[RMDB]
RNA sequence: GGGAACGACUCGAGUAGAGUCGAAAAUCUAGUGGCUUCGGCCACUAGAAAACGUAGUCAAAAUAACGCAAGACUAGGAAAGCGAAAGUACGAAAGUACAAAAAAGCUUACACUUCGGUGUAAGCAAGAUUAUAAAGGUCUUCGGACCUUUAUAAUCAAAAGAAACAACAACAACAAC
Reactivity to DMS in 0.01 (KOAc 150mM, MgCl2 10mM, bicine 150mM(pH8.5), 24C), signal-to-noise 3, nucleotides 027 to 126: u000c000u000a000g000u000g010g000c000u000u000c210g030g020c000c000a010c000u000a000g000a010a030a130a090c120g010u010a020g000u000c030a090a120a080a100u000a060a110c170g010c140a060a150g020a030c010u000a060g000g010a070a080a100g010c110g000a040a100a080g010u000a010c010g010a120a080a160g010u000a000c000a000a030a060a060a110a090g000c000u000u000a010c000a010c000u000u000c130g040g000u000g000u000a000a000g010c000a010a020
Reactivity to 2A3 in 0.01 (KOAc 150mM, MgCl2 10mM, bicine 150mM(pH8.5), 24C), signal-to-noise 3, nucleotides 027 to 126: u010c010u000a010g010u010g020g000c000u010u040c260g110g020c010c000a000c000u000a000g000a010a010a000a000c040g050u010a010g030u010c020a010a020a110a230u150a160a050c080g000c100a120a040g000a030c010u020a030g100g150a130a060a010g080c060g070a220a040a000g000u010a010c010g030a150a020a000g000u010a010c030a000a130a000a010a010a010g010c010u000u000a000c000a000c000u030u070c230g060g000u000g000u010a000a000g000c000a000a020
Source: RMDB library M2PK50, as collected in RNAgym. An RNA of 177 nucleotides, treated with DMS and 2A3 and read out base by base. For DMS, 3,617 sequencing reads were counted. DMS adducts were read by reverse transcription with MarathonRT. 2A3 adducts were read by reverse transcription with SuperScript II with manganese.